[RMDB]
RNA sequence: GGGAACGACUCGAGUAGAGUCGAAAAAUAGUCAUGUCACCCUUGGCACGAGCGAUUGUCAGGGGUAGCUUUCUGCGCUUUUCAAAAAUCGGAAGAAAUUUGUACCUUUUGAGACGAAGGUUUGUAUACAACUAAUAGGGUUCGCCCUAUUAGUUGUAAAAGAAACAACAACAACAAC
Reactivity to 2A3 in 0.01 (KOAc 150mM, MgCl2 10mM, bicine 150mM(pH8.5), 24C), signal-to-noise 6, nucleotides 027 to 126: a000u190a020g070u070c040a060u090g060u100c050a000c000c000c000u000u010g000g000c020a020c070g110a130g130c120g230a280u040u090g000u010c000a000g010g000g020g000u010a010g010c000u000u110u010c020u060g040c010g030c050u050u080u030u090c080a080a070a060a050a070u150c050g100g020a060a040g070a070a150a070u140u190u150g030u120a060c010c000u010u020u030u080g140a120g010a000c070g020a030a010g020g020u020u010u090g070u020a090u010
Reactivity to DMS in 0.01 (KOAc 150mM, MgCl2 10mM, bicine 150mM(pH8.5), 24C), signal-to-noise 4, nucleotides 027 to 126: a070u020a060g010u000c080a070u000g010u010c060a070c000c000c010u000u010g010g000c000a020c110g000a130g030c190g010a120u020u000g020u000c000a020g020g000g000g010u010a010g010c030u000u010u000c030u010g020c100g000c080u000u000u000u020c070a030a050a010a060a120u000c020g010g020a080a050g000a030a040a230u010u000u000g000u010a090c030c000u000u000u020u010g010a130g010a080c160g000a030a040g000g000u000u000u010g010u000a130u000
Description:
The data come from the RNA Mapping Database (RMDB), libraries RFM100 and RFMREP. Chemical mapping of a 177-nucleotide RNA with 2A3 and DMS. Values cover nucleotides 27 to 126.